[RMDB]
RNA sequence: GGGAACGACUCGAGUAGAGUCGAAAAGAUAUGGAGGCAGUUAGAAGGCAUUGUAGACAUGACGUGGGAUCGGAAACGAUCCCUUCGUCAACAGCUACACGAUGCCUUCUAACUGCCUCCUAAGUCAUCUAAAUAUGCUGUUCGCAGCAUAUUUAGAAAAAGAAACAACAACAACAAC
Reactivity to DMS in 0.01 (KOAc 150mM, MgCl2 10mM, bicine 150mM(pH8.5), 24C), signal-to-noise 6, nucleotides 027 to 126: g010a060u000a300u020g000g010a020g010g010c000a010g010u000u000a000g010a020a000g010g010c010a020u010u010g020u010a020g010a070c160a280u010g000a010c000g010u000g010g000g010a020u000c000g000g000a130a080a190c010g000a010u000c000c000c010u000u000c000g020u000c000a030a080c300a160g010c020u000a030c060a090c300g010a020u000g000c000c000u000u000c000u000a000a010c000u000g000c010c010u000c000c000u000a010a050g010u000c050a160
Structure probing data (DMS) for a 177-nucleotide construct. It was measured as part of the RMDB library TTRINS. Conditions: 150 mM KOAc, 10 mM MgCl2 and 150 mM bicine (pH 8.5), 24 C. The DMS profile rests on 8,767 reads.